This 177-nucleotide RNA was probed chemically with 2A3 and DMS. Reactivities are given for positions 27 through 126. 2A3 adducts were read by reverse transcription with SuperScript II with manganese.

[RMDB]
RNA sequence: GGGAACGACUCGAGUAGAGUCGAAAAAAUCUUUAUUCCGUGGAUCAACAAACCAUCACCCGCAAAAAAGCAUUCAGUCAUCUCUGCUGCAGCUAAAACAUGGGCAAUCACAGCAAGAACAUGGGGAUGAGAACAAUAGAUUCGUCUAUUGUUCUCAAAAAGAAACAACAACAACAAC
Reactivity to 2A3 in 0.01 (KOAc 150mM, MgCl2 10mM, bicine 150mM(pH8.5), 24C), signal-to-noise 9, nucleotides 027 to 126: a000a000u100c070u060u130u070a100u080u020c020c020g010u060g040g010a090u100c040a040a090c020a090a110a070c030c010a020u040c030a030c000c030c010g050c130a050a050a060a030a010a020g040c030a050u090u100c010a020g060u040c010a080u030c070u010c020u070g020c020u030g000c020a020g010c020u100a060a090a020a040c040a070u100g010g040g000c020a020a020u100c030a020c020a080g070c030a070a060g040a080a040c020a070u090g020g010g010g020a020
Reactivity to DMS in 0.01 (KOAc 150mM, MgCl2 10mM, bicine 150mM(pH8.5), 24C), signal-to-noise 6, nucleotides 027 to 126: a060a020u010c030u000u010u010a100u020u000c020c010g030u000g000g000a050u000c090a080a060c120a080a110a090c070c030a040u010c050a080c020c010c020g040c120a000a030a060a060a080a040g000c060a060u020u010c050a060g010u010c070a070u010c040u000c060u010g010c050u000g000c100a080g010c060u000a030a040a070a050c110a040u010g020g010g010c030a050a050u020c070a080c060a070g010c070a050a050g010a060a040c060a050u010g000g000g000g010a150
Overview:
DMS adducts were read by reverse transcription with MarathonRT.